[RMDB]
RNA sequence: GGGAACGACUCGAGUAGAGUCGAAAAGAUAUGGAGUGUCCAUGACCACAUCGAUCUCGGAAACGAGGGAGUGGGAGUGGAGCACUCCUAAGUCAAAUCGGGCUCUUACUUCGGUAAGAGCCCGAAACCUUGUGUACAUGUUCGCAUGUACACAAGGAAAAGAAACAACAACAACAAC
Reactivity to DMS in 0.01 (KOAc 150mM, MgCl2 10mM, bicine 150mM(pH8.5), 24C), signal-to-noise 3, nucleotides 027 to 126: g000a070u020a300u000g020g000a020g010u010g030u000c010c010a000u000g020a300c000c000a030c010a240u000c150g000a060u020c000u000c000g010g010a100a140a140c010g010a020g010g000g000a020g030u000g010g000g000a290g010u000g000g000a080g000c010a000c010u000c000c000u000a000a060g000u000c020a060a090a150u000c010g020g010g000c000u000c000u000u010a010c000u000u000c190g020g030u000a030a000g000a010g010c000c000c000g000a000a010a080
Reactivity to 2A3 in 0.01 (KOAc 150mM, MgCl2 10mM, bicine 150mM(pH8.5), 24C), signal-to-noise 2, nucleotides 027 to 126: g030a020u090a060u180g000g000a000g010u020g020u000c000c000a000u030g000a020c040c000a020c020a220u300c040g070a100u030c010u000c030g010g050a110a070a050c030g000a020g010g030g020a030g020u010g000g020g000a010g040u000g000g020a040g050c010a000c010u000c000c000u000a030a000g030u000c030a070a020a120u050c020g000g000g000c000u010c030u000u010a020c000u020u050c250g020g000u030a020a000g000a020g000c050c000c020g000a000a000a000